[RMDB]
RNA sequence: GGGAACGACUCGAGUAGAGUCGAAAAAUACUUCUCAGCAUGGCGCGUUGCAGUCCAACAAGAUCCAGGGACUGUACAGAAUUUUCCUAUACCUCGAGUCGGGUUUGGAAUCUAAGGUUGACUCGCUAAAACUUUACGUGGUUCGCCACGUAAAGAAGCAAAUCAGUAUCUUCGGAUACUGAUUUGCAAAAGAAACAACAACAACAAC
Reactivity to 2A3 in 0.01 (KOAc 150mM, MgCl2 10mM, bicine 150mM(pH8.5), 24C), signal-to-noise 1, nucleotides 027 to 156: a000u160a020c050u030u060c010u000c030a000g020c030a070u140g100g000c040g000c020g080u060u060g000c010a000g020u000c000c010a070a070c030a260a130g070a180u070c070c010a040g010g020g020a000c020u020g000u020a020c000a000g170a150a030u000u040u020u010c020c020u050a040u030a110c000c020u020c060g020a010g020u020c010g000g000g000u050u060u050g030g000a020a030u000c050u100a160a040g150g000u090u060g030a020c000u000c000g000c020u050a080a030a040a110c010u010u000u000a000c000g000u010g000g030u010u040c160g030c100c010a000c000g000u000a000a000a000g010a010a020
Chemical mapping of a 207-nucleotide RNA with 2A3. The data come from the RNA Mapping Database (RMDB), library M2RFPK. Conditions: 150 mM KOAc, 10 mM MgCl2 and 150 mM bicine (pH 8.5), 24 C. For 2A3, 988 sequencing reads were counted.